[RMDB]
RNA sequence: GGGAACGACUCGAGUAGAGUCGAAAAAUUGUCUUUUAUGUACGAAUGAUUUCUUAAGCUACCAAGUUGAAUUUAUCAGGUUAUCAUUAGUACGAUUAAUAUCAGUUCAAUUGUGGUAAAUAAGUGAGCGUGAUACUCGUUUCGACGAGUAUCACGCAAAAGAAACAACAACAACAAC
Reactivity to 2A3 in 0.01 (KOAc 150mM, MgCl2 10mM, bicine 150mM(pH8.5), 24C), signal-to-noise 1, nucleotides 027 to 126: a000u060u060g100u090c000u240u200u000u000a220u300g210u180a000c000g120a120a100u120g040a140u080u000u000c000u000u000a120a000g050c000u000a040c000c000a220a000g000u120u060g000a000a000u000u040u040a050u180c000a000g000g180u080u000a000u000c050a000u130u150a040g220u020a000c000g000a000u000u000a000a000u000a000u080c000a000g000u000u000c180a000a000u000u060g300u120g100g000u100a000a000a020u160a300a200g000u020g030a000